[RMDB]
This 177-nucleotide RNA was probed chemically with DMS and 2A3. For 2A3, 13,460 sequencing reads were counted. Conditions: 150 mM KOAc, 10 mM MgCl2 and 150 mM bicine (pH 8.5), 24 C. DMS adducts were read by reverse transcription with MarathonRT.
RNA sequence: GGGAACGACUCGAGUAGAGUCGAAAAUACUGCUGCUGGACGAGCCCUUCGGUGCGCUCGAUGCGCUGACCCGCCUCCAGAUGCAGGACGAGGUGCUGCGCAUCCGCCAUACUGACAAUCUGACCACGAUGCCAUACUAUUUCGAUAGUAUGGCAUCAAAAGAAACAACAACAACAAC
Reactivity to DMS in 0.01 (KOAc 150mM, MgCl2 10mM, bicine 150mM(pH8.5), 24C), signal-to-noise 5, nucleotides 027 to 126: u060a110c060u000g010c020u000g000c030u000g000g000a080c080g020a110g020c040c010c020u010u000c040g020g010u010g000c120g000c070u000c180g010a040u000g020c000g010c010u010g000a060c050c010c020g000c010c030u000c070c170a110g020a130u040g020c210a080g000g010a110c060g010a110g020g000u010g000c010u010g000c030g010c000a030u010c010c150g000c010c040a080u020a110c050u020g000a100c200a070a070u020c060u020g000a130c040c040a100c140
Reactivity to 2A3 in 0.01 (KOAc 150mM, MgCl2 10mM, bicine 150mM(pH8.5), 24C), signal-to-noise 8, nucleotides 027 to 126: u150a020c010u020g050c010u010g000c000u030g010g040a040c010g020a030g020c020c010c000u020u070c060g040g020u070g030c060g000c030u060c070g030a030u030g000c000g000c010u020g030a040c000c000c010g020c010c010u040c030c030a080g070a270u190g080c090a030g010g020a040c030g020a130g040g030u130g180c060u050g000c010g000c000a000u010c000c010g000c000c010a060u100a120c020u050g060a050c030a030a090u050c050u010g040a060c020c000a050c120